[RMDB]
Annotation
The data come from the RNA Mapping Database (RMDB), library M2PK50. Chemical mapping of a 177-nucleotide RNA with DMS and 2A3. Reactivities are given for positions 27 through 126. 2A3 adducts were read by reverse transcription with SuperScript II with manganese.
RNA sequence: GGGAACGACUCGAGUAGAGUCGAAAACGACAGACGUUCGCGUCUGUCGAAAUACCGAGGUUGUUGCUCGGUAAAUAACAACAACCCUUGGAAACUAGGGAAAAAGGAGAUGGUUCGCCAUCUCCAAGUACACUAAUAACUUCGGUUAUUAGUGUACAAAAGAAACAACAACAACAAC
Reactivity to DMS in 0.01 (KOAc 150mM, MgCl2 10mM, bicine 150mM(pH8.5), 24C), signal-to-noise 7, nucleotides 027 to 126: c010g010a010c000a000g010a010c000g020u000u010c210g030c010g030u000c000u000g020u000c010g000a020a050a100u000a150c010c000g000a020g000g010u000u000g010u000u000g000c010u000c030g000g010u010a020a040a060u010a060a080c070a050a060c090a050a120c020c000c010u010u010g000g000a150a110a160c040u000a030g010g000g020a040a040a050a120a090g010g000a000g010a020u000g000g010u000u010c250g020c000c000a010u000c000u000c000c000a010a030
Reactivity to 2A3 in 0.01 (KOAc 150mM, MgCl2 10mM, bicine 150mM(pH8.5), 24C), signal-to-noise 5, nucleotides 027 to 126: c010g000a000c000a000g010a000c010g020u050u060c200g020c010g110u010c010u010g000u000c000g000a000a000a000u090a010c000c000g000a010g030g030u050u030g030u060u060g040c000u000c000g010g000u000a000a020a010u040a010a010c030a000a010c010a020a070c010c000c000u010u010g040g040a100a070a050c030u020a040g000g010g040a050a060a020a040a040g010g000a010g000a000u000g010g050u050u090c200g050c050c000a000u000c000u000c000c000a000a000
For 2A3, 16,169 sequencing reads were counted. DMS adducts were read by reverse transcription with MarathonRT. The RNA was probed in 150 mM KOAc, 10 mM MgCl2 and 150 mM bicine (pH 8.5) at 24 C.